[RMDB]
RNA sequence: GGGAACGACUCGAGUAGAGUCGAAAAUAUUACAGCUUGUAAUUUAGGGGGCGCUGUUUGUAGGAAGCAUGCUACAGAGUACAGAGAGUAUAUGGAAGCAUAUAAUCUUGUCUCUGCAUCAGGUUUCACUAAUAUUCUAGUUCGCUAGAAUAUUAGUAAAAGAAACAACAACAACAAC
Reactivity to DMS in 0.01 (KOAc 150mM, MgCl2 10mM, bicine 150mM(pH8.5), 24C), signal-to-noise 5, nucleotides 027 to 126: u010a060u000u000a020c030a130g010c120u010u010g000u000a040a050u000u000u010a100g010g010g010g010g020c240g010c050u000g010u000u000u010g010u000a080g010g000a040a040g020c040a040u000g010c040u000a050c010a010g000a020g010u020a020c010a060g020a020g010a040g000u000a010u000a010u000g000g010a140a130g000c000a010u000a010u000a010a030u000c000u000u000g000u000c010u000c000u000g010c030a030u000c050a040g000g010u000u000u000c040
Reactivity to 2A3 in 0.01 (KOAc 150mM, MgCl2 10mM, bicine 150mM(pH8.5), 24C), signal-to-noise 3, nucleotides 027 to 126: u160a020u030u090a030c020a040g100c050u160u120g040u100a080a100u100u080u300a100g030g000g010g000g000c030g000c020u030g010u050u090u100g030u040a010g000g040a020a000g010c000a000u030g000c000u010a030c010a010g000a020g020u080a010c020a000g220a000g010a010g090u000a000u000a000u010g010g040a080a030g040c000a000u010a000u000a020a020u000c000u010u020g000u000c000u000c000u010g000c000a030u020c020a010g080g010u000u010u020c010